RNA sequence: GGGAACGACUCGAGUAGAGUCGAAAAGAGGACCUCAUCUGCGGUAUUGCCCGGUGCGCCCGCCAGGAUGGUUAUAGCUUCCCAGGUCCGGCAUUUUUCAUGUCCAUGUGGGAGAAGCUGAGAAGUCAACUUCCGAGGGAUUCGUCCCUCGGAAGUUAAAAGAAACAACAACAACAAC
Reactivity to 2A3 in 0.01 (KOAc 150mM, MgCl2 10mM, bicine 150mM(pH8.5), 24C), signal-to-noise 2, nucleotides 027 to 126: g110a070g010g060a000c020c020u110c040a020u040c040u060g000c060g000g000u090a090u140u300g000c000c000c020g170g100u300g000c050g000c000c020c020g000c010c010a030g040g000a080u080g010g010u000u210a090u060a110g000c070u030u020c030c000c000a090g060g020u040c080c000g050g000c050a040u000u040u000u100u220c100a000u000g180u100c000c020a040u060g000u060g060g000g000a200g020a140a000g080c000u050g060a020g090a230a040g050u100c080
Reactivity to DMS in 0.01 (KOAc 150mM, MgCl2 10mM, bicine 150mM(pH8.5), 24C), signal-to-noise 1, nucleotides 027 to 126: g010a110g030g000a010c010c000u000c030a040u010c040u000g000c060g030g000u000a020u040u000g060c030c040c070g000g020u040g000c030g000c040c060c180g010c050c100a100g030g000a020u000g000g000u050u000a030u000a090g000c040u000u010c000c000c000a070g000g000u000c060c020g020g000c030a060u000u000u080u030u020c150a070u010g000u010c110c060a060u020g000u000g010g000g000a170g010a030a030g000c010u080g000a090g000a060a060g000u040c120

An RNA of 177 nucleotides, treated with 2A3 and DMS and read out base by base. Conditions: 150 mM KOAc, 10 mM MgCl2 and 150 mM bicine (pH 8.5), 24 C. Reactivities are given for positions 27 through 126. It was measured as part of the RMDB library OK1LIB. For 2A3, 580 sequencing reads were counted.